The data come from the RNA Mapping Database (RMDB), library OK1LIB. Structure probing data (2A3 and DMS) for a 177-nucleotide construct.

RNA sequence: GGGAACGACUCGAGUAGAGUCGAAAAUGGAUCACUUAGAUUCUCUUUGAUGUAUACUGGUCCUGCCUUGUCCAGUGCUAAACUCAUUCUAGCAUACACCCCGCCUGGUGCUCGUGGUCCACAGGACUAAGGCAGUUGGAUUCGUCCAACUGCCUUAAAAAGAAACAACAACAACAAC
Reactivity to 2A3 in 0.01 (KOAc 150mM, MgCl2 10mM, bicine 150mM(pH8.5), 24C), signal-to-noise 4, nucleotides 027 to 126: u150g000g030a040u020c030a020c090u030u120a080g030a060u120u030c100u010c070u080u140u240g110a130u080g080u090a070u020a130c050u060g040g020u090c000c010u020g030c000c020u030u090g070u000c010c030a020g000u040g060c020u060a130a160a080c050u070c090a090u150u060c040u030a010g050c000a020u060a180c050a060c040c000c000c010g040c010c010u050g000g010u050g030c070u050c050g070u030g000g000u000c000c000a010c030a030g020g000a000c030
Reactivity to DMS in 0.01 (KOAc 150mM, MgCl2 10mM, bicine 150mM(pH8.5), 24C), signal-to-noise 2, nucleotides 027 to 126: u000g040g000a000u000c020a100c100u010u040a050g020a140u020u000c020u000c040u010u020u040g000a110u050g010u010a110u040a050c060u000g000g000u020c010c010u000g000c020c010u010u000g020u000c070c060a090g030u000g000c020u000a010a050a090c130u000c170a110u030u020c120u020a020g000c080a010u000a090c180a080c060c000c010c010g000c130c030u000g000g000u010g030c000u050c060g020u000g000g010u030c020c040a070c070a090g010g000a080c030